Structure probing data (2A3 and DMS) for a 177-nucleotide construct. The reactions ran in a buffer of 150 mM KOAc, 10 mM MgCl2 and 150 mM bicine (pH 8.5), at 24 C. For 2A3 the reverse transcriptase was SuperScript II with manganese. It was measured as part of the RMDB library OK1LIB. Reactivities are given for positions 27 through 126.
RNA sequence: GGGAACGACUCGAGUAGAGUCGAAAAUCUGUUUUAAAGGAUCUAAACUCUUUAAUUAGUGUGUGUGAAAUUGAAACUCCGGCUUAGCACACAUUCCGGUUCGGUUUAUGAUUUGUUCUCCAACAACCAUGUUCUCGAUUUUCGAGUUGAGAGUAUGAAAAGAAACAACAACAACAAC
Reactivity to 2A3 in 0.01 (KOAc 150mM, MgCl2 10mM, bicine 150mM(pH8.5), 24C), signal-to-noise 9, nucleotides 027 to 126: u030c020u040g140u040u070u040u140a090a110a030g040g010a020u020c050u120a040a060a070c040u050c010u060u090u140a090a090u080u100a070g010u020g000u000g000u000g010u020g090a070a120a140u140u120g070a180a080a060c060u040c040c010g030g000c030u060u170a010g000c000a000c000a000c010a020u080u020c030c020g080g000u030u070c030g020g060u030u060u050a100u120g040a050u010u030u090g030u030u010c050u000c030c010a030a050c010a020a030c060
Reactivity to DMS in 0.01 (KOAc 150mM, MgCl2 10mM, bicine 150mM(pH8.5), 24C), signal-to-noise 9, nucleotides 027 to 126: u010c040u010g010u010u010u010u020a030a080a100g010g010a050u010c080u040a090a090a100c080u020c030u010u010u010a040a060u030u020a060g010u000g010u000g010u000g000u000g000a050a080a120u030u020g000a090a090a100c100u010c040c020g000g010c050u000u010a230g000c010a010c020a020c020a040u010u010c060c030g000g000u010u010c080g010g000u010u010u010a050u030g000a030u000u010u000g010u000u000c020u010c010c060a060a080c190a060a090c160